[RMDB]
RNA sequence: GGGAACGACUCGAGUAGAGUCGAAAAGAGGGGCAAGGUCUUAAUAGGGCCUGGAAUCACAGCAUUGAAACCCGAAGCCGGUCGAUCUAUUCCUGAGCAGGAUGAAGUCGCUCUUACGAGCGAUGGAUUAUUCACGAGAGUUCGCUCUCGUGAAUAAAAAAGAAACAACAACAACAAC
Reactivity to 2A3 in 0.01 (KOAc 150mM, MgCl2 10mM, bicine 150mM(pH8.5), 24C), signal-to-noise 4, nucleotides 027 to 126: g080a020g030g030g000g020c030a020a030g020g010u010c030u100u170a180a180u150a150g050g000g010c000c000u000g020g040a030a000u040c060a030c010a080g060c040a050u030u120g120a090a040a020c020c000c000g040a040a000g030c000c000g010g000u020c020g000a050u000c020u110a100u030u080c010c020u040g020a030g050c060a040g030g070a020u050g020a050a000g010u000c010g000c000u000c010u060u220a070c190g000a000g010c000g000a010u000g000g000a010
Reactivity to DMS in 0.01 (KOAc 150mM, MgCl2 10mM, bicine 150mM(pH8.5), 24C), signal-to-noise 5, nucleotides 027 to 126: g030a150g020g000g000g030c050a110a040g000g020u010c000u010u010a120a100u060a150g010g010g000c010c020u020g020g010a080a060u010c060a060c100a080g000c080a070u020u000g010a050a090a130c040c020c010g010a120a110g030c070c050g000g000u010c030g020a050u010c030u000a130u020u010c020c010u000g000a090g000c110a090g010g000a070u020g020a180a250g000u000c000g010c000u000c000u020u050a140c280g010a010g000c000g000a000u000g000g000a180